[RMDB]
RNA sequence: GGGAACGACUCGAGUAGAGUCGAAAACAAGCUGCGAAAAGCCCGGGGGAGGCGCAAGGAGCCUUAGAACCCGGGAUUCCCGAAUGGGAUAUCCUGUCCCUUCGGGGACGCUCCCUUACGGGAGCGGCGGAAGUGACGAAUUCGUUCGUCACUUCCGAAAAGAAACAACAACAACAAC
Reactivity to DMS in 0.01 (KOAc 150mM, MgCl2 10mM, bicine 150mM(pH8.5), 24C), signal-to-noise 2, nucleotides 027 to 126: c140a040a140g010c070u010g000c050g030a080a150a060a100g020c010c000c000g020g020g000g010g010a020g000g010c030g040c250a190a170g010g000a170g020c020c000u020u010a040g000a110a190c000c010c000g000g000g000a000u030u010c010c010c000g020a030a000u070g000g000g000a000u000a060u010c050c030u020g000u000c000c000c000u000u000c000g000g000g040g000a020c040g010c030u000c000c000c000u010u070a180c260g040g000g000a010g010c010g000g020
Reactivity to 2A3 in 0.01 (KOAc 150mM, MgCl2 10mM, bicine 150mM(pH8.5), 24C), signal-to-noise 3, nucleotides 027 to 126: c040a060a050g130c030u130g000c050g080a020a090a130a050g040c000c000c000g000g000g000g000g010a020g000g000c020g010c030a050a180g190g040a070g080c000c000u060u110a050g050a070a040c000c000c000g000g000g000a000u020u020c000c010c000g010a020a050u300g000g000g010a010u010a040u050c010c030u020g010u010c000c000c000u000u010c000g000g010g000g000a000c000g010c000u000c000c020c000u080u160a090c090g000g000g010a000g000c000g010g010